[RMDB]
RNA sequence: GGGAACGACUCGAGUAGAGUCGAAAACGUAUGACUGCGGGAAACACGUGCUAGUGAUCCUCACUGACAUGAGCUCGUAUGCGGAUGCCUUACGUGAGGUGUCUGCGGCGCGUGAGGAGGUCCCUGGACCUCACGCGCAGUUCGCUGCGCGUGAGGUAAAAGAAACAACAACAACAAC
Reactivity to 2A3 in 0.01 (KOAc 150mM, MgCl2 10mM, bicine 150mM(pH8.5), 24C), signal-to-noise 9, nucleotides 027 to 126: c040g060u120a100u250g160a120c080u100g030c080g020g010g070a060a140a000c030a000c040g020u040g020c040u070a090g070u020g110a050u060c020c010u020c010a020c040u090g080a040c020a160u150g050a070g040c020u040c100g110u170a200u280g050c030g050g020a040u100g010c010c010u060u120a130c120g140u280g100a010g000g020u060g020u010c020u050g020c030g010g000c010g000c010g000u010g000a010g010g030a010g000g060u020c000c010c010u020g040g080
Reactivity to DMS in 0.01 (KOAc 150mM, MgCl2 10mM, bicine 150mM(pH8.5), 24C), signal-to-noise 9, nucleotides 027 to 126: c050g010u020a060u020g010a070c070u010g020c050g010g010g000a110a110a120c040a040c020g010u000g000c020u010a080g010u010g000a070u020c070c040u000c000a020c020u010g000a130c120a080u010g000a160g020c210u000c160g010u020a060u040g020c020g000g010a010u010g000c010c000u020u000a090c300g010u020g000a010g010g020u010g010u000c000u010g010c050g010g010c020g010c030g000u000g000a050g000g000a100g000g010u000c010c010c010u010g020g000
An RNA of 177 nucleotides, treated with 2A3 and DMS and read out base by base.
Conditions: 150 mM KOAc, 10 mM MgCl2 and 150 mM bicine (pH 8.5), 24 C.
It was measured as part of the RMDB library OK1LIB.
For DMS the reverse transcriptase was MarathonRT.
The 2A3 profile rests on 21,366 reads.